[RMDB]
RNA sequence: GGGAACGACUCGAGUAGAGUCGAAAAGGGGUCAUCCGUCACUUCGCCCAGGAGCUUAGACAACCAUGGCUGAAGCCUCCACGGCCAUGGUCGAGCUCCUGUGAGCGAAGAAGUCGGAUGACGGAGGCACCCAAAGGAUUUCGUUCGCGAAAUCCAAUCGAUCUGUGUACUUCGGUACACAGAUCGAAAAAGAAACAACAACAACAAC
Reactivity to 2A3 in 0.01 (KOAc 150mM, MgCl2 10mM, bicine 150mM(pH8.5), 24C), signal-to-noise 1, nucleotides 027 to 156: g110g000g030g000u030c020a030u000c000c000g010u000c060a010c190u070u030c030g000c030c000c000a010g010g000a010g000c020u300u300a010g010a010c000a020a030c000c000a020u000g000g020c020u040g020a110a040g020c010c010u020c010c050a030c020g010g000c010c000a000u000g000g000u000c000g000a000g000c000u030c030c000u000g000u030g000a060g000c000g000a040a040g030a000a030g030u000c010g000g000a000u000g000a000c000g000g000a000g000g010c010a030c000c000c000a140a110a000g020g000a000u010u000u000c010g020u080u080c300g000c000g080a000a000a000u000c000c080a000a090
Source: RMDB library RNAMAK, as collected in RNAgym. The record gives the reactivity of an RNA of 207 nucleotides to 2A3. For 2A3 the reverse transcriptase was SuperScript II with manganese. Conditions: 150 mM KOAc, 10 mM MgCl2 and 150 mM bicine (pH 8.5), 24 C. For 2A3, 1,098 sequencing reads were counted.